[RMDB]
Notes
Conditions: 150 mM KOAc, 10 mM MgCl2 and 150 mM bicine (pH 8.5), 24 C. Structure probing data (2A3 and DMS) for a 207-nucleotide construct. It was measured as part of the RMDB library M2RFPK. For DMS, 3,013 sequencing reads were counted.
RNA sequence: GGGAACGACUCGAGUAGAGUCGAAAAACUGAUACCUUACGAGGUAUCAGAAUGACUUCGUGGUAGAGCGCCACGAACGGAAAAUAAAGAAAGCUCGAUUGAAACGCACCGGGUACGCACGGUGCGAAAAAGUCGAUCCAGUUCGCUGGAUCGACAACGUUUACAAGAAGUUCGCUUCUUGUAAACGAAAAGAAACAACAACAACAAC
Reactivity to 2A3 in 0.01 (KOAc 150mM, MgCl2 10mM, bicine 150mM(pH8.5), 24C), signal-to-noise 3, nucleotides 027 to 156: a020c000u010g010a000u010a000c000c000u060u050a070c230g110a010g000g000u000a000u010c000a000g000a010a050u110g050a050c040u010u000c010g000u000g000g000u020a120g030a000g000c000g000c000c000a000c010g000a000a000c010g050g030a070a030a020a010u060a020a030a020g160a030a060a010g010c010u000c010g090a110u060u250g050a110a090a000c010g000c000a000c000c000g020g010g110u220a050c060g000c080a020c000g000g000u000g000c000g000a010a010a000a000a000g000u000c000g000a000u000c010c000a010g030u080u070c150g060c110u000g000g000a000u000c000g000a000c000a000a000
Reactivity to DMS in 0.01 (KOAc 150mM, MgCl2 10mM, bicine 150mM(pH8.5), 24C), signal-to-noise 2, nucleotides 027 to 156: a190c000u000g010a010u000a010c010c010u010u000a100c220g050a090g030g060u000a000u050c010a000g010a080a100u010g010a100c100u000u000c000g050u000g000g020u000a020g010a030g040c010g070c000c010a020c020g030a010a050c110g030g010a080a050a060a090u000a040a070a200g010a030a050a060g000c000u000c010g020a300u000u000g000a120a080a150c010g000c000a010c000c000g010g010g020u010a080c160g010c130a040c070g030g000u010g040c010g000a000a000a020a070a050g030u010c020g010a010u000c010c000a030g040u000u010c250g040c030u030g000g000a030u000c000g020a010c010a010a040